[RMDB]
RNA sequence: GGGAACGACUCGAGUAGAGUCGAAAAGACGACGAGCCGCAUGUUCGGGGUGAAGCCCGCCUCGUGCAGGCGCAGUACAGCCGCGCCAGUAACGUCACGUGACGAGCUCUGGAUCAGAUAGUUGAGCGCCGAGUAGGCACGGUCUGGGUCGACCGGAAUACGUAAUAUGUUUCGACAUAUUACGUAUAAAAGAAACAACAACAACAAC
Reactivity to DMS in 0.01 (KOAc 150mM, MgCl2 10mM, bicine 150mM(pH8.5), 24C), signal-to-noise 4, nucleotides 027 to 156: g020a110c030g000a130c030g010a120g030c030c020g030c040a070u000g020u000u000c000g010g010g000g030u000g020a110a170g020c070c040c020g050c000c000u000c010g040u000g010c030a080g020g020c010g000c030a080g040u000a110c090a130g010c010c010g010c030g030c000c020a120g010u010a030a120c050g020u000c020a090c150g020u000g000a050c020g000a100g000c060u000c000u000g020g020a110u000c080a120g010a120u010a120g010u000u000g000a130g020c040g010c040c020g010a140g020u000a160g020g030c040a030c020g000g010u010c010u010g000g020g040u000c040g010a080c030c020g010g010a150
Reactivity to 2A3 in 0.01 (KOAc 150mM, MgCl2 10mM, bicine 150mM(pH8.5), 24C), signal-to-noise 4, nucleotides 027 to 156: g060a010c070g000a000c020g020a010g060c040c010g030c040a030u060g020u040u060c020g000g000g000g030u030g110a100a050g030c020c020c000g000c000c000u010c000g010u020g000c010a050g010g000c000g020c010a020g070u100a130c030a060g040c020c020g010c020g000c000c010a030g030u080a100a050c040g040u050c060a010c220g110u190g020a050c010g020a020g020c010u020c020u040g020g030a060u100c040a040g080a150u140a050g090u060u120g050a060g060c040g000c030c010g020a060g070u180a090g030g030c040a020c010g020g010u020c040u050g050g000g030u050c020g010a030c010c010g010g030a050
This 207-nucleotide RNA was probed chemically with DMS and 2A3. The 2A3 profile rests on 5,979 reads. For 2A3 the reverse transcriptase was SuperScript II with manganese. Reactivities are given for positions 27 through 156.